An RNA of 177 nucleotides, treated with DMS and read out base by base. Conditions: 150 mM KOAc, 10 mM MgCl2 and 150 mM bicine (pH 8.5), 24 C.

RNA sequence: GGGAACGACUCGAGUAGAGUCGAAAAAUCUAUGAUGAGGAACUAAUGACUGCAUUUGCAGAGUUAGAAAGCACUGAGUUAAUGGAUGUUCCUGAAGUUUACAGUACUGAUGAGGUGAAAGACCUUAUCAUCAGGGGACUUUCGAGUCCCCUGAUGAAAAAGAAACAACAACAACAAC
Reactivity to DMS in 0.01 (KOAc 150mM, MgCl2 10mM, bicine 150mM(pH8.5), 24C), signal-to-noise 2, nucleotides 027 to 126: a010u010c010u000a020u000g010a040u000g000a300g000g000a100a120c040u000a020a000u010g020a260c030u020g010c010a300u000u000u030g000c010a000g020a300g000u000u000a010g010a080a080a030g010c190a140c040u000g010a290g000u010u000a060a040u000g000g000a000u000g000u000u000c000c020u000g000a050a090g000u000u000u020a090c160a040g030u020a030c070u000g000a020u000g010a010g000g020u010g000a020a140a120g010a060c010c010u000u000a040